[RMDB]
RNA sequence: GGGAACGACUCGAGUAGAGUCGAAAAAAGGGCACUGAGCCGUCAGGGUAAGACCAUAGCGAUAGGUGGAGAUGCUAGGAGUUAGAGGAGACCGAAGCGAGGAGGAAAGUAAAGAAAGCAACGGGGCCAUGACCUUUAUGUUCGCAUAAAGGUCAUGAAAAGAAACAACAACAACAAC
Reactivity to 2A3 in 0.01 (KOAc 150mM, MgCl2 10mM, bicine 150mM(pH8.5), 24C), signal-to-noise 2, nucleotides 027 to 126: a000a000g030g000g020c040a020c100u070g000a010g010c040c000g050u050c030a020g070g050g000u030a020a030g010a040c000c000a120u080a050g060c040g070a040u040a080g070g010u020g050g040a090g000a010u070g060c010u020a010g030g020a080g060u040u080a030g020a020g070g020a010g020a000c010c030g010a030a000g000c020g030a010g000g010a020g020g020a030a070a000g040u110a060a050a040g070a090a050a000g050c010a000a060c000g000g000g010g000c010
Reactivity to DMS in 0.01 (KOAc 150mM, MgCl2 10mM, bicine 150mM(pH8.5), 24C), signal-to-noise 3, nucleotides 027 to 126: a100a070g010g010g010c020a080c080u010g000a150g000c030c030g000u000c080a080g020g010g020u010a090a090g000a100c030c020a090u000a050g030c070g010a080u000a080g030g020u000g000g020a100g030a070u010g010c070u000a030g000g000a070g020u000u000a090g010a060g000g010a110g010a030c080c040g000a060a050g020c110g010a040g000g010a040g000g000a050a010a050g010u010a050a050a070g000a050a050a070g010c050a040a060c070g010g000g010g030c220